[RMDB]
RNA sequence: GGGAACGACUCGAGUAGAGUCGAAAAGUACGCCGGGAAGGAAUACCAGCUCAACGGUGAAGUACAGGUCCAGCCCAGCCCGUCUGGGACGAUGGACCACCUGACCUUCGUAAUCAACCGCUGGGAGGGGAGGAACUUUAUUCGUAAAGUUCCUCCCAAAAGAAACAACAACAACAAC
Reactivity to 2A3 in 0.01 (KOAc 150mM, MgCl2 10mM, bicine 150mM(pH8.5), 24C), signal-to-noise 1, nucleotides 027 to 126: g080u030a000c060g000c040c020g050g030g010a020a020g000g050a050a070u100a240c000c000a020g030c000u030c050a030a040c050g030g000u060g080a190a020g020u010a010c040a050g000g030u000c000c000a040g030c130c000c020a010g030c050c050c090g140u110c040u010g000g000g000a000c040g070a060u090g000g010a020c000c000a000c000c020u040g060a080c010c000u000u030c000g020u010a020a020u040c010a030a060c000c000g060c020u010g010g020g030a060g010
Reactivity to DMS in 0.01 (KOAc 150mM, MgCl2 10mM, bicine 150mM(pH8.5), 24C), signal-to-noise 2, nucleotides 027 to 126: g000u000a020c020g010c020c030g000g010g000a030a010g010g010a260a050u010a130c040c020a070g020c010u000c090a070a040c040g000g020u000g010a100a080g000u000a050c090a060g010g010u000c000c000a080g010c020c020c010a000g000c020c160c230g010u010c020u000g000g000g000a050c100g000a170u000g000g000a010c020c020a000c060c040u000g000a070c070c050u000u000c030g000u000a020a070u000c080a100a120c170c140g000c000u000g000g000g000a190g000

Description: Chemical mapping of a 177-nucleotide RNA with 2A3 and DMS. Source: RMDB library OK2TST, as collected in RNAgym. For 2A3, 1,467 sequencing reads were counted. The DMS profile rests on 1,358 reads.